[RMDB]
RNA sequence: GGGAACGACUCGAGUAGAGUCGAAAAGGUUCCGUCUUCGGACGGAACCAAACAUAGUAUACCCUGUUGCAUGUAUACUAUGAUAUUCCGUAAUGCAACGGAAAAUGCCUAGUUUCGACUAGGCAAAGCUAUUUUUUUGGUUCGCCAAAAAAAUAGCAAAAGAAACAACAACAACAAC
Reactivity to 2A3 in 0.01 (KOAc 150mM, MgCl2 10mM, bicine 150mM(pH8.5), 24C), signal-to-noise 2, nucleotides 027 to 126: g000g000u000u000c000c000g000u000c010u010u070c190g080g010a000c000g000g010a000a000c000c000a000a000a000c000a000u010a000g010u000a000u000a010c020c040c120u140g010u000u000g010c000a010u020g010u000a010u010a010c000u010a000u000g020a010u010a060u050u010c000c010g030u050a040a020u040g030c000a000a010c010g070g020a140a160a030a050u070g000c000c000u020a020g010u000u060u090c210g040a010c010u000a000g000g000c010a010a000a000
Reactivity to DMS in 0.01 (KOAc 150mM, MgCl2 10mM, bicine 150mM(pH8.5), 24C), signal-to-noise 2, nucleotides 027 to 126: g020g000u000u000c000c010g010u000c000u000u010c170g040g010a010c000g020g000a000a000c000c000a000a040a060c000a000u000a020g000u000a000u000a000c010c210c160u010g000u000u010g000c000a040u000g010u000a000u000a000c000u000a000u000g010a100u010a070u000u000c010c000g020u000a060a040u000g010c000a000a020c020g030g010a090a050a120a100u000g000c000c010u000a000g010u000u000u010c190g020a020c010u000a000g010g000c000a000a010a080
Chemical mapping of a 177-nucleotide RNA with 2A3 and DMS. The RNA was probed in 150 mM KOAc, 10 mM MgCl2 and 150 mM bicine (pH 8.5) at 24 C. The data come from the RNA Mapping Database (RMDB), library M2PK50.